[RMDB]
RNA sequence: GGGAACGACUCGAGUAGAGUCGAAAACACUUCAAAUUAUUCGUAUUAUGGAAAAUAUCUGGCAAAAUCAAGGUCUUGAUCUUCGGUAGGUAACCAGUAAGGCAACCUGUAUGUUGAAAGUUAUCCUGAAAAAGUGAACUAUUAAUAAUUAUAGAAGCUAGUAUACAUGAUUCGUCAUGUAUACUAGAAAAGAAACAACAACAACAAC
Reactivity to 2A3 in 0.01 (KOAc 150mM, MgCl2 10mM, bicine 150mM(pH8.5), 24C), signal-to-noise 2, nucleotides 027 to 156: c030a020c010u040u100c050a020a010a110u030u010a040u030u160c030g020u060a070u130u080a110u240g070g000a050a090a020a110u090a020u040c060u060g050g000c020a080a030a070a160u040c060a110a050g000g020u030c020u050u080g060a110u030c020u070u100c120g020g020u030a050g010g010u020a040a010c030c000a050g040u090a070a010g000g020c020a000a030c010c010u020g010u080a110u030g050u020u010g000a000a050a010g010u030u010a010u060c020c020u040g020a140a190a010a050a050g070u020g060a020a020c000u010a020u130u030a170a110u050a110a020u110u020a090u050a270g020a070a000g020
Reactivity to DMS in 0.01 (KOAc 150mM, MgCl2 10mM, bicine 150mM(pH8.5), 24C), signal-to-noise 1, nucleotides 027 to 156: c050a050c050u000u020c070a080a080a150u020u000a150u020u000c030g080u010a100u000u000a100u000g010g010a100a140a150a070u000a080u000c000u000g000g000c020a030a060a060a150u000c020a040a070g000g010u000c020u000u030g000a050u000c030u010u000c040g010g030u010a030g010g020u000a050a070c010c040a060g000u000a040a090g020g000c010a090a090c030c020u010g020u000a000u020g030u000u000g000a060a170a140g000u020u000a050u000c010c030u030g010a080a040a060a120a160g030u010g020a020a080c010u000a070u040u000a050a130u000a130a120u000u000a180u000a240g000a050a170g000
This 207-nucleotide RNA was probed chemically with 2A3 and DMS. DMS adducts were read by reverse transcription with MarathonRT.